About this RNA:
This 177-nucleotide RNA was probed chemically with DMS and 2A3. Conditions: 150 mM KOAc, 10 mM MgCl2 and 150 mM bicine (pH 8.5), 24 C. 2A3 adducts were read by reverse transcription with SuperScript II with manganese.
RNA sequence: GGGAACGACUCGAGUAGAGUCGAAAAACCUACGGACGCCGUCGACGCAGGGAAUCCGGUGUGCGGGGUAAGCCUGUGCACCGUGAGGGAGACAACCCAGAGUUAGGUUAAGGUCCCAAAGUGCGAGGUUUGUUGGGUUAUUCGUAACCCAACAAACAAAAGAAACAACAACAACAAC
Reactivity to DMS in 0.01 (KOAc 150mM, MgCl2 10mM, bicine 150mM(pH8.5), 24C), signal-to-noise 3, nucleotides 027 to 126: a040c020c010u010a040c080g000g040a080c080g010c060c030g000u010c010g020a260c130g000c090a050g000g000g000a220a120u030c000c010g020g020u000g010u000g000c020g000g000g000g000u050a090a080g020c000c000u000g010u000g000c010a000c000c000g000u020g000a040g010g000g020a120g020a090c080a060a060c000c010c000a160g000a200g000u050u020a080g020g020u010u020a120a110g010g000u010c000c040c030a080a080a040g010u020g010c080g010a170g020
Reactivity to 2A3 in 0.01 (KOAc 150mM, MgCl2 10mM, bicine 150mM(pH8.5), 24C), signal-to-noise 3, nucleotides 027 to 126: a000c020c000u020a010c030g030g000a020c050g030c040c000g030u100c020g020a080c060g010c080a040g000g020g040a040a050u000c010c000g000g000u010g000u000g010c010g010g000g010g030u190a160a050g270c000c000u040g000u000g010c000a000c000c000g020u090g030a020g040g050g010a080g010a040c040a060a040c030c000c020a040g030a010g140u140u180a030g030g000u000u040a040a030g080g060u030c000c000c000a020a080a010g080u100g060c040g050a040g020